[RMDB]
RNA sequence: GGGAACGACUCGAGUAGAGUCGAAAAGAUAUGGAAUGGAGGACAUGACGGAAUUCGGAAACGAAUUCACGUCAACAGCCUUGCAUUCCUAAGUCAAAAGGUCUCGUGUCUUCGGACACGAGACCAAGCUGGAUGUUAUGUUCGCAUAACAUCCAGCAAAAGAAACAACAACAACAAC
Reactivity to DMS in 0.01 (KOAc 150mM, MgCl2 10mM, bicine 150mM(pH8.5), 24C), signal-to-noise 1, nucleotides 027 to 126: g000a000u000a050u000g000g000a000a020u000g000g000a000g000g000a040c080a130u030g000a010c040g020g000a010a010u000u010c000g020g000a030a010a020c000g000a000a010u000u000c000a080c010g050u020c000a050a110c200a180g000c000c010u000u000g010c010a000u000u010c000c000u000a000a110g000u030c000a090a090a180a120g020g000u000c000u010c010g020u000g000u000c000u000u000c260g020g000a010c000a010c000g000a000g000a000c000c010a010a030
Reactivity to 2A3 in 0.01 (KOAc 150mM, MgCl2 10mM, bicine 150mM(pH8.5), 24C), signal-to-noise 1, nucleotides 027 to 126: g000a010u030a010u090g000g000a000a000u020g000g040a010g000g000a060c230a300u300g010a010c010g000g000a000a020u020u000c000g000g000a010a000a000c010g010a020a000u020u000c100a080c140g000u000c000a000a030c040a010g000c060c000u020u070g140c010a000u020u010c000c010u000a010a000g010u010c030a000a020a080a210g010g000u000c000u000c000g000u000g000u000c090u060u120c300g150g010a000c000a000c000g000a000g000a020c020c000a000a000
Chemical mapping of a 177-nucleotide RNA with DMS and 2A3.
Values cover nucleotides 27 to 126.
For 2A3, 2,556 sequencing reads were counted.
Reactivities are rounded to 0.1 and cut off at 0 and 3.
The RNA was probed in 150 mM KOAc, 10 mM MgCl2 and 150 mM bicine (pH 8.5) at 24 C.
For DMS the reverse transcriptase was MarathonRT.